[RMDB]
RNA sequence: GGGAACGACUCGAGUAGAGUCGAAAAGAUAUGGAGCGUCACAGGACAUGAGCUCCCAUCGGAAACGAUGGUGAGCUCAACAGCCUGAAGUCGCUCCUAAGUCAAAACGGCAAGUUCGCUUGCCGAAGGUAAUGCAUUAGUUCGCUAAUGCAUUACCAAAAGAAACAACAACAACAAC
Reactivity to 2A3 in 0.01 (KOAc 150mM, MgCl2 10mM, bicine 150mM(pH8.5), 24C), signal-to-noise 6, nucleotides 027 to 126: g020a000u050a020u110g000g000a000g000c010g010u020c030a010c010a090g020g040a050c140a300u300g010a010g000c000u010c000c000c000a000u000c000g030g010a070a010a020c010g000a010u020g000g020u130g010a010g000c000u000c000a010a010c000a000g040c000c000u030g040a080a070g030u020c000g000c000u000c000c000u000a020a000g030u000c020a010a020a070a110c010g010g000c000a000a000g020u080u180c280g100c220u000u020g000c000c000g010a040a010
Reactivity to DMS in 0.01 (KOAc 150mM, MgCl2 10mM, bicine 150mM(pH8.5), 24C), signal-to-noise 6, nucleotides 027 to 126: g000a040u000a300u000g000g000a030g020c000g020u000c040a300c010a020g000g000a050c100a290u000g000a020g020c000u000c000c000c000a000u010c000g010g010a130a070a120c010g010a020u000g000g010u000g010a010g020c000u000c000a010a030c200a130g000c000c000u000g010a130a110g020u000c010g020c010u000c000c000u000a000a080g010u000c040a070a060a110a240c020g000g000c000a020a020g010u000u010c280g010c000u000u000g010c000c000g010a020a040
This 177-nucleotide RNA was probed chemically with 2A3 and DMS. DMS adducts were read by reverse transcription with MarathonRT. The 2A3 profile rests on 28,996 reads.